[RMDB]
RNA sequence: GGGAACGACUCGAGUAGAGUCGAAAACGAUCAGUACGUUCGCGUACUGAUCGAAGCUACUGGAGACAGUAGCCAGUCGCAGACCUUGUUUGGCGGUAACAAGGAAACCAUAAAGUAGGCAGGUCUUUAUGACUGCGACAACCGCCAUCCUGCCUUAUAGAUAGAAAGGAUUCGUCCUUUCUAUCUAAAAAGAAACAACAACAACAAC
Reactivity to DMS in 0.01 (KOAc 150mM, MgCl2 10mM, bicine 150mM(pH8.5), 24C), signal-to-noise 2, nucleotides 027 to 156: c030g000a000u000c000a010g020u010a000c000g020u010u020c300g030c000g020u000a020c000u060g000a010u000c020g000a030a060g030c000u000a030c010u020g000g000a300g000a300c020a020g030u000a020g020c000c030a060g000u010c030g000c010a090g000a300c020c000u000u000g000u000u000u000g040g020c030g010g000u000a060a050c010a050a050g000g010a050a070a050c050c020a020u000a010a040a040g000u000a080g000g010c000a030g000g000u000c030u000u000u000a030u000g000a190c040u000g000c000g000a030c040a040a120c060c070g000c090c050a070u000c010c020u000g000c030c010u000u000a160
Reactivity to 2A3 in 0.01 (KOAc 150mM, MgCl2 10mM, bicine 150mM(pH8.5), 24C), signal-to-noise 2, nucleotides 027 to 156: c000g000a000u000c000a000g010u010a000c010g010u010u070c170g010c000g070u010a000c000u000g000a000u010c000g000a000a010g000c000u000a000c000u000g000g010a030g020a020c000a010g000u000a000g000c010c010a020g010u010c000g000c010a000g010a100c010c000u010u000g010u020u010u070g060g030c040g020g030u020a010a010c000a000a000g030g010a030a010a000c040c000a000u000a010a020a000g020u040a080g010g000c000a000g010g020u010c000u000u010u000a020u020g040a040c010u000g010c000g010a000c000a020a040c020c030g020c020c000a000u040c000c000u000g010c000c010u020u090a050

The record gives the reactivity of an RNA of 207 nucleotides to DMS and 2A3. Values are in units of 0.01, from 0 to 300, in steps of 10. The RNA was probed in 150 mM KOAc, 10 mM MgCl2 and 150 mM bicine (pH 8.5) at 24 C.